[RMDB]
RNA sequence: GGGAACGACUCGAGUAGAGUCGAAAAAGUCAGAGUUCGCUCUGACUCGCACUCCUAAGUCCAGAGAUCCUUUGAGGACUUUGAUCUAUCGGAAACGAUAGGGAGUCCUUUGGGAUCGACGAAGGAUAUGGACACCUGUGGAUGUUCGCAUCCACAAGCGACAUUAAAUCUUCGGAUUUAAUGUCGCAAAAGAAACAACAACAACAAC
Reactivity to 2A3 in 0.01 (KOAc 150mM, MgCl2 10mM, bicine 150mM(pH8.5), 24C), signal-to-noise 2, nucleotides 027 to 156: a000g010u000c010a010g010a010g000u100u130c210g060c110u030c000u010g010a010c000u010c010g080c020a130c030u030c000c030u050a180a050g040u020c020c000a020g000a000g000a100u010c000c020u190u300u300g070a030g000g000a000c000u140u050u050g060a090u060c000u010a000u000c000g040g060a100a070a070c020g000a010u000a010g010g010g000a000g020u000c000c000u000u000u000g020g010g010a000u010c000g000a020c010g080a040a090g020g000a020u020a050u090g000g000a030c020a070c080c000u020g010u000g000g010a020u010g020u090u140c270g030c060a010u000c000c000a000c000a000a030
An RNA of 207 nucleotides, treated with 2A3 and read out base by base. The 2A3 profile rests on 1,612 reads. Conditions: 150 mM KOAc, 10 mM MgCl2 and 150 mM bicine (pH 8.5), 24 C. Values cover nucleotides 27 to 156.